[RMDB]
RNA sequence: GGGAACGACUCGAGUAGAGUCGAAAAAAAUUAACAGGCUAUUGAGGUGUCCAGUAUUACUGAUCCACUACAUCCCAGUACAUCUUCAUACCAGGAUGCUUAUGGCUUACAGGAUAUUAGCGAUAGAAGGAAGAUACGGAUUCGUCCGUAUCUUCCUAAAAGAAACAACAACAACAAC
Reactivity to DMS in 0.01 (KOAc 150mM, MgCl2 10mM, bicine 150mM(pH8.5), 24C), signal-to-noise 2, nucleotides 027 to 126: a130a030a030u010u010a080a050c090a120g000g010c050u000a030u000u000g010a160g000g010u000g020u020c030c050a090g020u000a070u000u020a110c140u010g010a050u030c030c020a090c050u020a040c100a070u000c030c010c010a120g010u010a070c160a030u020c070u000u000c160a120u000a100c060c030a110g020g000a020u000g030c080u000u000a080u000g010g010c070u010u000a050c030a070g000g000a040u000a050u000u000a110g010c080g000a090u020a030g010a070